RNA sequence: GGGAACGACUCGAGUAGAGUCGAAAAAGAGGAAAGGAGGACACGGACGACAAACCGUAAGUUCUACUGCCCUUUAUUGUUGGGUGCACCCUGGGACCCAGUAAUACCCGGGGGGAGGCGGGGUAAAGAAUACACUACAGUUCGCUGUAGUGUAUUCAAAAGAAACAACAACAACAAC
Reactivity to DMS in 0.01 (KOAc 150mM, MgCl2 10mM, bicine 150mM(pH8.5), 24C), signal-to-noise 4, nucleotides 027 to 126: a040g010a090g000g010a060a300a030g000g010a030g010g000a010c020a040c020g010g010a050c070g010a180c300a080a130a070c030c000g000u000a070a040g000u000u000c010u000a060c020u000g000c300c010c010u000u000u010a060u010u000g000u020u010g000g010g030u000g010c100a080c040c020c040u000g030g010g010a050c010c010c010a060g010u010a030a030u000a100c010c000c000g020g000g000g000g000g010a040g000g000c140g010g000g010g000u010a050a070a090
Reactivity to 2A3 in 0.01 (KOAc 150mM, MgCl2 10mM, bicine 150mM(pH8.5), 24C), signal-to-noise 2, nucleotides 027 to 126: a020g040a040g020g010a090a130a050g020g040a010g020g010a010c000a020c040g050g080a050c040g030a040c140a030a080a030c010c000g020u050a070a070g000u010u020c010u050a100c020u010g000c000c000c000u010u070u020a170u070u120g140u080u070g000g030g000u030g020c040a070c000c020c030u030g030g000g020a040c010c000c010a010g020u040a000a020u070a240c010c000c010g010g020g000g060g000g000a110g020g040c200g000g000g030g000u030a020a030a000
Structure probing data (DMS and 2A3) for a 177-nucleotide construct. Values cover nucleotides 27 to 126. For 2A3, 2,528 sequencing reads were counted. The reactions ran in a buffer of 150 mM KOAc, 10 mM MgCl2 and 150 mM bicine (pH 8.5), at 24 C. High 2A3 reactivity points to a flexible backbone, as in loops and unpaired stretches. It was measured as part of the RMDB library VIROID. For 2A3 the reverse transcriptase was SuperScript II with manganese.